[RMDB]
Source: RMDB library OK3TST, as collected in RNAgym. This 207-nucleotide RNA was probed chemically with DMS and 2A3. DMS adducts were read by reverse transcription with MarathonRT. Conditions: 150 mM KOAc, 10 mM MgCl2 and 150 mM bicine (pH 8.5), 24 C.
RNA sequence: GGGAACGACUCGAGUAGAGUCGAAAAGAGCUUUACUUCCCAGUAUGUGGUCAGUUUUGGAAUAGGUGUGGUGUGGUGCUGAAAAAAAAUGUAUAUUCUGUUGAUUUGGGGUGGAGAGUUCUGUAGAUGUCUAUUAGGUCCACUUGGUGCAGAGCUAUCGGAUAUAAAUCUUCGGAUUUAUAUCCGAAAAAGAAACAACAACAACAAC
Reactivity to DMS in 0.01 (KOAc 150mM, MgCl2 10mM, bicine 150mM(pH8.5), 24C), signal-to-noise 2, nucleotides 027 to 156: g000a090g000c030u000u000u010a100c060u000u000c020c000c000a300g000u000a050u000g020u000g010g040u010c010a090g020u000u000u010u000g010g010a120a100u010a040g030g010u000g040u020g030g020u010g040u000g000g020u000g040c040u000g000a000a000a000a000a090a080a070a080u000g000u000a090u010a100u000u000c040u000g000u010u000g000a140u000u000u000g020g010g000g040u000g020g010a120g000a070g020u020u000c020u020g060u000a110g010a120u000g000u000c020u000a120u010u000a080g030g020u000c010c020a070c080u010u000g000g020u000g020c020a070g020a120g030c020u000a140
Reactivity to 2A3 in 0.01 (KOAc 150mM, MgCl2 10mM, bicine 150mM(pH8.5), 24C), signal-to-noise 1, nucleotides 027 to 156: g050a000g000c020u110u110u110a110c040u010u020c000c000c060a010g020u020a070u080g040u030g000g010u020c060a060g000u030u050u140u240g040g030a070a050u060a120g000g000u050g010u030g050g010u030g010u010g020g030u010g010c030u050g010a000a000a000a000a000a020a020a080u140g020u020a140u010a040u130u030c040u020g010u060u050g010a120u020u020u080g050g000g000g030u040g020g020a010g000a000g000u070u060c000u090g000u070a040g010a210u040g040u040c010u070a110u080u050a030g060g000u030c010c000a030c000u040u070g040g000u020g000c020a000g010a000g020c010u030a090

For 2A3, 676 sequencing reads were counted. High 2A3 reactivity points to a flexible backbone, as in loops and unpaired stretches.